[RMDB]
RNA sequence: GGGAACGACUCGAGUAGAGUCGAAAACACCGCCACCUUCGGUGGUGGAUGCGCUUUCAGGUCCACCAAUAGGCUAGCUGUUUUCGAGCGGUGUAUUUGCGUGGGGGGUGAAUGUGGAUACGGACAAAAAGGAGUUUUUCUUCGGAAAAACUCCUUUAAAAGAAACAACAACAACAAC
Reactivity to DMS in 0.01 (KOAc 150mM, MgCl2 10mM, bicine 150mM(pH8.5), 24C), signal-to-noise 2, nucleotides 027 to 126: c010a000c000c000g070c010c010a050c000c000u000u010c150g060g090u000g010g020u010g000g000a070u010g030c090g000c130u000u020u000c160a180g020g000u010c020c050a020c040c080a110a080u050a080g010g040c030u000a110g000c030u000g000u030u000u000u040c100g000a100g050c000g010g000u000g020u020a130u000u000u030g020c070g030u010g040g040g010g000g020g000u000g040a050a090u020g000u000g000g020a110u000a060c090g000g000a140c280a040a020